[RMDB]
An RNA of 177 nucleotides, treated with 2A3 and read out base by base. Values cover nucleotides 27 to 126.
RNA sequence: GGGAACGACUCGAGUAGAGUCGAAAACAAGGAAGGAGUAUAAUAAAAUGACUAAUCUUAAUACGCAACAUCAACCAACAACAUCAAAUAUUAUUAUUUUAUUAUACUCUUUAGGACUCGAACGUUAGUUGUUUUCUCUAUUCGUAGAGAAAACAACAAAAGAAACAACAACAACAAC
Reactivity to 2A3 in 0.01 (KOAc 150mM, MgCl2 10mM, bicine 150mM(pH8.5), 24C), signal-to-noise 1, nucleotides 027 to 126: c050a060a030g120g010a040a000g000g060a030g000u000a000u000a030a030u000a000a000a000a010u020g010a020c080u010a000a060u050c030u100u210a050a050u120a140c050g070c090a000a210c000a080u120c060a100a230c030c020a050a170c140a110a040c010a090u130c030a010a220a080u190a200u020u010a020u050u010a010u000u000u020u000a010u000u000a000u000a050c000u090c000u000u000u000a030g010g020a030c010u020c170g060a080a010c120g030u060u120a060

Conditions: 150 mM KOAc, 10 mM MgCl2 and 150 mM bicine (pH 8.5), 24 C. 2A3 adducts were read by reverse transcription with SuperScript II with manganese.